[RMDB]
RNA sequence: GGGAACGACUCGAGUAGAGUCGAAAAAGUUAAUACCAUUGCUCAAGUUCCAGCCGUUAGUACUAUAACAGUAAACGGACUGCAGGACGUUACUGACAAAACUUAUCAACCUGAACCACAGCAGGGAGUUGAGUCCUGGACAGCAGGGUCUGUGGCCUCCCAACGGUAUUUUCGAAUACCGUUGGGAAAAAGAAACAACAACAACAAC
Reactivity to DMS in 0.01 (KOAc 150mM, MgCl2 10mM, bicine 150mM(pH8.5), 24C), signal-to-noise 2, nucleotides 027 to 156: a070g020u010u020a070a060u000a180c030c000a300u000u000g040c010u000c120a080a140g030u000u000c040c020a120g000c080c040g020u010u000a120g030u010a100c070u010a230u010a040a150c120a040g020u020a050a050a060c040g000g000a100c010u000g000c030a120g000g010a000c000g020u010u010a060c100u000g020a260c040a050a080a020a090c050u010u010a220u010c040a040a160c000c000u000g000a080a110c040c100a020c020a020g010c000a010g000g020g000a110g000u010u000g010a150g020u000c030c030u000g010g010a110c040a050g020c030a050g000g010g020u000c000u000g000u000g010g030c120c040
Reactivity to 2A3 in 0.01 (KOAc 150mM, MgCl2 10mM, bicine 150mM(pH8.5), 24C), signal-to-noise 1, nucleotides 027 to 156: a000g140u130u110a080a110u110a100c060c060a110u030u220g000c030u060c100a180a060g020u040u040c000c000a000g000c020c000g040u080u070a100g210u040a020c000u020a060u100a300a130c110a040g040u040a030a100a000c010g000g190a240c010u010g030c010a040g010g000a010c030g070u070u110a060c080u040g080a040c050a040a180a120a050c100u130u130a040u220c060a020a030c020c000u000g000a000a000c000c000a000c020a010g010c000a000g010g050g030a060g000u020u040g010a000g000u000c000c000u060g090g110a040c010a040g050c000a000g030g030g000u020c000u010g000u000g000g000c000c010